[RMDB]
RNA sequence: GGGAACGACUCGAGUAGAGUCGAAAAACGGUCAUAUACGUAUGACCGAAUGAGCAUAACAGGGCCACCCCAAAGCUUUCACAUUGUGGCCCCUGUCAGAUUCUGGUAAAUCUGCGAGUUCUGCUAAAUUAGGUAACUCUCUUCGGAGAGUUACCAACUAAUCUGAUAGGUUCGCCUAUCAGAUUAGAAAAGAAACAACAACAACAAC
Reactivity to DMS in 0.01 (KOAc 150mM, MgCl2 10mM, bicine 150mM(pH8.5), 24C), signal-to-noise 2, nucleotides 027 to 156: a170c000g000g000u000c000a000u000a060u010a140c150g040u000a010u000g020a030c010c000g000a010a040u010g000a090g000c050a070u010a060a030c050a090g000g020g030c020c000a030c000c020c070c030a080a100a080g000c060u000u000u020c080a070c050a140u010u020g000u010g020g020c020c020c000c010u000g020u000c020a050g000a020u010u000c020u000g020g000u010a050a020a020u000c010u000g000c040g020a150g020u010u010c110u000g000c010u000a070a060a130u000u010a070g030g030u010a010a010c000u010c000u000c000u000u010c300g020g010a010g020a030g000u000u000a000c000c000a030a050
Reactivity to 2A3 in 0.01 (KOAc 150mM, MgCl2 10mM, bicine 150mM(pH8.5), 24C), signal-to-noise 5, nucleotides 027 to 156: a010c000g000g000u000c000a000u010a010u010a050c140g110u040a010u010g000a010c000c000g030a000a070u100g010a010g010c020a030u010a120a010c010a050g000g000g010c010c010a030c030c040c020c030a050a140a050g060c080u080u300u290c130a120c020a160u160u160g000u000g000g010c010c040c000c000u050g050u080c000a000g010a060u080u030c030u300g110g010u100a040a060a060u000c000u010g030c030g030a070g060u040u030c050u050g020c030u050a070a120a170u210u110a100g000g000u000a000a000c000u000c000u010c000u040u090c220g040g000a010g000a010g000u000u000a000c000c000a010a000